[RMDB]
RNA sequence: GGGAACGACUCGAGUAGAGUCGAAAAGCUGCAUAAGUUUGGAAGAGCGUCAACCCAUGCAGCGGCUCUUAAGCAGUGGCACCAGCUGUUUAAGGGUGAAAAGAGUGGUGCUGGGCAGUGCGGUUGGGCUUCCUGGGCUGCACUGUCGAGACUUCACGUACUAGAUGAGCUUCGGCUCAUCUAGUACAAAAGAAACAACAACAACAAC
Reactivity to 2A3 in 0.01 (KOAc 150mM, MgCl2 10mM, bicine 150mM(pH8.5), 24C), signal-to-noise 2, nucleotides 027 to 156: g000c000u010g000c000a010u030a140a100g030u070u120u150g100g040a150a070g080a040g050c060g130u110c060a040a060c000c000c030a000u020g000c000a000g000c010g010g000c020u010c000u000u000a000a000g010c010a000g000u000g000g000c000a000c000c000a010g000c000u000g010u010u000u010a010a000g000g000g000u140g060a070a040a020a010g050a000g040u000g000g000u000g000c000u020g000g000g000c000a000g000u000g000c010g000g040u020u030g100g040g010c110u150u130c030c040u060g050g040g000c010u010g010c000a010c000u000g000u000c000g000a000g010a000c020u050u050c090a060c160
Annotation: Structure probing data (2A3) for a 207-nucleotide construct. Values cover nucleotides 27 to 156. Conditions: 150 mM KOAc, 10 mM MgCl2 and 150 mM bicine (pH 8.5), 24 C. For 2A3, 2,197 sequencing reads were counted. For 2A3 the reverse transcriptase was SuperScript II with manganese.